RNA sequence: GGGAACGACUCGAGUAGAGUCGAAAAUGGAAUCACUUCAACUCAUCAACAACGUCAUUGUCUCUGUAAAUAGUGUUCAAGAGCAAGACGAUGAUUUAAUUGCUGCUAGAGAUAACGCAAUCUCUGCUCAUGCUAUGGAUUUCGAUCCAUAGCAUGAAAAAGAAACAACAACAACAAC
Reactivity to DMS in 0.01 (KOAc 150mM, MgCl2 10mM, bicine 150mM(pH8.5), 24C), signal-to-noise 5, nucleotides 027 to 126: u010g000g010a090a060u000c090a070c060u000u010c050a050a130c050u010c040a070u010c090a080a070c100a070a140c160g000u000c000a070u000u000g000u030c010u000c050u010g000u030a080a090a120u020a090g010u050g020u040u000c080a090a070g010a140g000c030a050a000g000a010c020g040a040u010g010a030u000u010u040a080a090u020u020g000c050u010g000c060u020a030g000a050g000a040u010a070a130c230g010c140a070a070u000c010u000c000u000g010c130
Reactivity to 2A3 in 0.01 (KOAc 150mM, MgCl2 10mM, bicine 150mM(pH8.5), 24C), signal-to-noise 9, nucleotides 027 to 126: u150g030g040a050a060u140c040a050c090u110u060c060a080a070c040u030c050a100u050c030a050a140c010a040a080c060g030u000c080a300u020u010g140u040c000u000c020u010g070u070a040a150a130u200a230g190u160g140u250u110c080a120a020g000a010g020c000a010a010g010a010c010g020a030u040g010a010u010u140u240a140a110u090u130g060c050u040g000c020u070a020g000a000g000a030u060a140a060c110g020c140a070a030u010c010u000c000u010g000c020
An RNA of 177 nucleotides, treated with DMS and 2A3 and read out base by base. Source: RMDB library OK1LIB, as collected in RNAgym. DMS adducts were read by reverse transcription with MarathonRT. For 2A3, 15,732 sequencing reads were counted.